[RMDB]
RNA sequence: GGGAACGACUCGAGUAGAGUCGAAAAGUAAUUUCAUAAGAGAAUGCCCAAACCAUGCAUUACUGGAUGGCUUUUUGUCAUUAUUUUUUUUGAAGGCGCAAAAUUGUGUUAAAACACGAUUCGCGUCCCUUCCCAGAGGAUUCGUCCUCUGGGAAGGAAAAGAAACAACAACAACAAC
Reactivity to DMS in 0.01 (KOAc 150mM, MgCl2 10mM, bicine 150mM(pH8.5), 24C), signal-to-noise 1, nucleotides 027 to 126: g010u000a030a000u000u000u000c010a130u020a060a110g010a170g000a030a050u010g000c020c010c030a030a150a200c040c010a030u000g010c090a040u020u050a180c250u000g000g000a020u000g000g000c270u000u000u000u000u000g000u060c010a060u000u020a020u000u000u050u000u020u000u000u000g000a060a090g010g000c000g000c010a010a150a030a000u010u000g000u000g000u060u020a030a140a010a230c020a010c000g000a030u000u010c300g000c010g080u020c000
Reactivity to 2A3 in 0.01 (KOAc 150mM, MgCl2 10mM, bicine 150mM(pH8.5), 24C), signal-to-noise 2, nucleotides 027 to 126: g080u080a050a110u070u070u070c070a060u100a140a030g160a070g000a130a000u130g040c000c020c000a030a020a000c040c000a030u050g050c000a070u140u230a300c040u020g060g140a030u010g030g000c070u110u040u100u020u020g050u100c010a020u010u110a100u180u040u070u030u000u000u000u180g160a040a010g000g000c000g000c000a060a060a060a060u060u020g000u020g000u160u180a010a030a020a010c000a000c020g020a000u010u090c100g040c000g000u000c000